[RMDB]
RNA sequence: GGGAACGACUCGAGUAGAGUCGAAAAGAUAUGGACAGUUUAAGACGCUGCACGAUGAAACGCUGUCGGAAACGACAGCGUGGAGUGCAGAACUACGUUGUAAUACUGUCCUAAGUCAAAACUGUUCUGGAUCCUCUUCGGAGGAUCCAGAACAGAACUUUAGAGAAUAGUUCGCUAUUCUCUAAAGAAAAGAAACAACAACAACAAC
Reactivity to 2A3 in 0.01 (KOAc 150mM, MgCl2 10mM, bicine 150mM(pH8.5), 24C), signal-to-noise 2, nucleotides 027 to 156: g000a010u000a010u040g000g000a000c000a000g000u040u070u080a160a040g040a000c000g000c000u020g010c010a010c010g300a300u040g010a010a010a000c000g000c000u000g000u000c010g000g000a000a010a000c000g000a010c000a000g000c020g000u000g000g010a010g000u000g020c000a000g010a000a000c020u090a020c010g020u000u010g050u060a020a060u040a200c010u000g000u000c000c000u000a000a000g000u000c000a000a000a080a130c010u010g000u020u020c000u020g000g000a010u040c010c020u030c050u170u180c300g100g000a000g000g000a000u000c000c000a060g000a010a000c000a000g010a000a010
Structure probing data (2A3) for a 207-nucleotide construct. Values cover nucleotides 27 to 156. The RNA was probed in 150 mM KOAc, 10 mM MgCl2 and 150 mM bicine (pH 8.5) at 24 C.